[RMDB]
RNA sequence: GGGAACGACUCGAGUAGAGUCGAAAAUUCCAUUUGAGUAUCCUGAAAACGGGCUUUUCAGGAUGGAACGUACAUAUUAAAUAGUAGGAGUGCAUAGUGGCCCGUAUAGCAGGCAUUAACAUUCCUGAAAACGUGAAAAGGUUCGCCUUUUCACGAACUAAUAGACAGCGUUCGCGCUGUCUAUUAGAAAAGAAACAACAACAACAAC
Reactivity to 2A3 in 0.01 (KOAc 150mM, MgCl2 10mM, bicine 150mM(pH8.5), 24C), signal-to-noise 2, nucleotides 027 to 156: u040u010c000c010a010u160u040u080g000a010g030u090a010u030c000c000u000g020a010a010a010a020c090g100g030g000c020u070u050u010u000c000a000g000g000a000u010g010g040a090a020c050g070u170a040c080a060u220a040u150u300a130a170a070u180a040g130u050a010g000g020a010g000u030g010c050a080u040a070g060u090g050g120c000c010c000g040u120a130u160a110g090c070a000g060g000c000a000u040u050a030a010c010a000u020u030c010c000u000g040a010a060a000a030c010g000u000g000a000a000a000a000g060g010u100u140c190g120c000c000u000u010u000u000c010a000c000g000a000a000
Reactivity to DMS in 0.01 (KOAc 150mM, MgCl2 10mM, bicine 150mM(pH8.5), 24C), signal-to-noise 2, nucleotides 027 to 156: u000u000c000c000a220u000u010u020g020a240g010u010a100u000c010c010u000g010a000a000a020a050c020g030g060g060c070u000u000u000u000c020a020g000g000a000u000g020g000a100a070c090g050u010a150c090a120u000a080u000u010a050a050a150u010a080g020u000a080g020g010a040g030u000g010c040a150u000a080g040u020g040g010c030c010c010g020u000a120u000a190g050c060a060g010g000c000a050u000u000a120a090c000a030u000u010c020c010u020g020a070a060a040a140c010g000u000g000a000a020a020a010g030g000u000u010c300g020c000c000u000u000u000u000c000a000c000g010a020a070